[RMDB]
RNA sequence: GGGAACGACUCGAGUAGAGUCGAAAAUGCUUUUAUUAGGCUAAAACCAAGUGAUCGCAAGAUCGUUAUAUUGGUUGAACUCUAGAUAAAAUGCAGAUCGUAUGGUCUUGUACCGACGACAGAUCAUUUUUGCUAAAGUUUUCGAACUUUAGCAAAAAAAAGAAACAACAACAACAAC
Reactivity to DMS in 0.01 (KOAc 150mM, MgCl2 10mM, bicine 150mM(pH8.5), 24C), signal-to-noise 6, nucleotides 027 to 126: u000g010c000u000u000u000u000a000u020u000a050g000g010c050u000a060a080a010a020c000c000a000a020g020u020g010a000u000c000g000c270a110a170g000a010u000c000g000u030u030a100u040a110u000u000g000g010u000u010g000a080a240c300u000c010u000a040g010a030u000a000a000a000a010u030g040c010a050g000a120u000c020g010u000a050u030g010g010u000c020u020u020g030u030a020c020c020g000a030c030g020a030c100a100g010a090u030c100a100u010
Reactivity to 2A3 in 0.01 (KOAc 150mM, MgCl2 10mM, bicine 150mM(pH8.5), 24C), signal-to-noise 3, nucleotides 027 to 126: u040g010c010u000u040u000u010a020u010u000a000g030g010c010u040a020a000a000a100c000c010a020a020g070u030g060a000u010c000g010c050a040a010g000a030u010c000g020u110u070a180u060a080u160u020g010g010u010u010g000a030a010c010u000c000u010a020g010a230u040a000a000a010a020u290g000c000a010g010a150u040c010g000u010a180u190g000g010u010c070u160u290g060u100a030c000c030g030a060c000g020a040c030a030g070a050u070c010a030u030
Chemical mapping of a 177-nucleotide RNA with DMS and 2A3.
For 2A3 the reverse transcriptase was SuperScript II with manganese.
The reactions ran in a buffer of 150 mM KOAc, 10 mM MgCl2 and 150 mM bicine (pH 8.5), at 24 C.